[RMDB]
RNA sequence: GGGAACGACUCGAGUAGAGUCGAAAAUCCUAGGCAUCGUUCCUCUAUCCGAUGUUGAAGCAAUGGCACAGUCCUAGGCAUCGGCGGUGUCGAAGCAAUGGCGUAGACCUCAGGCACCGAGCAUGUACUUAAUCACUUGCUUCGGCAAGUGAUUAAGAAAAGAAACAACAACAACAAC
Reactivity to 2A3 in 0.01 (KOAc 150mM, MgCl2 10mM, bicine 150mM(pH8.5), 24C), signal-to-noise 1, nucleotides 027 to 126: u050c020c000u030a040g060g040c040a020u060c030g000u010u030c000c020u160c120u030a060u000c000c000g000a010u010g000u080u000g090a090a010g010c060a120a070u160g060g010c090a160c110a300g110u000c030c000u010a000g010g030c000a000u000c000g060g000c040g000g000u000g000u020c000g000a000a010g010c000a040a080u300g010g000c050g150u140a100g030a130c000c010u070c040a010g000g000c000a000c000c000g000a020g000c040a010u120g010u030a050
Reactivity to DMS in 0.01 (KOAc 150mM, MgCl2 10mM, bicine 150mM(pH8.5), 24C), signal-to-noise 2, nucleotides 027 to 126: u000c000c000u000a060g000g020c100a130u000c020g000u000u000c000c010u000c250u010a090u020c030c000g040a020u010g020u000u010g010a100a090g010c020a090a080u010g010g000c030a160c250a070g020u000c000c000u000a110g010g000c000a010u000c020g000g020c020g000g000u000g000u020c000g000a080a100g000c030a140a050u000g000g020c030g000u020a070g010a180c000c020u000c040a130g000g000c020a020c010c000g000a090g010c070a080u010g010u010a130
An RNA of 177 nucleotides, treated with 2A3 and DMS and read out base by base. Values cover nucleotides 27 to 126. The 2A3 profile rests on 964 reads. 2A3 adducts were read by reverse transcription with SuperScript II with manganese. It was measured as part of the RMDB library VIROID. DMS adducts were read by reverse transcription with MarathonRT.